RNA sequence: GGGAACGACUCGAGUAGAGUCGAAAAGAUAUGGACCUGAACUACGACGUAACUUGACGUUGAAAGCAUACUUGAUCGGAAACGAUCAAGUAUGCUGGAGUCAAGGAGAAGUCGCAGGUCCUAAGUCGUAUUGACAACGGUUCGCCGUUGUCAAUACAAAAGAAACAACAACAACAAC
Reactivity to DMS in 0.01 (KOAc 150mM, MgCl2 10mM, bicine 150mM(pH8.5), 24C), signal-to-noise 2, nucleotides 027 to 126: g000a100u000a300u000g000g000a000c000c010u000g000a090a180c140u020a270c030g000a030c010g000u000a200a250c020u000u000g000a000c050g010u000u000g040a260a190a040g020c000a000u000a000c020u000u000g020a000u030c010g000g000a190a050a150c020g000a000u000c000a000a000g010u000a000u000g000c030u000g000g020a020g000u000c000a000a010g000g000a080g000a090a190g000u000c000g000c010a000g000g000u000c000c010u000a000a070g030u030c050
Reactivity to 2A3 in 0.01 (KOAc 150mM, MgCl2 10mM, bicine 150mM(pH8.5), 24C), signal-to-noise 1, nucleotides 027 to 126: g030a040u180a070u240g030g020a010c000c000u040g040a160a180c160u290a080c300g000a000c000g000u000a010a070c010u010u010g010a010c030g300u250u040g060a110a090a000g000c020a000u000a010c030u000u010g000a000u000c020g030g000a140a050a050c080g000a010u010c010a000a000g010u010a000u000g000c000u000g030g010a020g010u000c000a000a000g060g020a010g000a000a000g000u000c010g030c010a010g010g030u010c030c000u040a090a000g020u080c070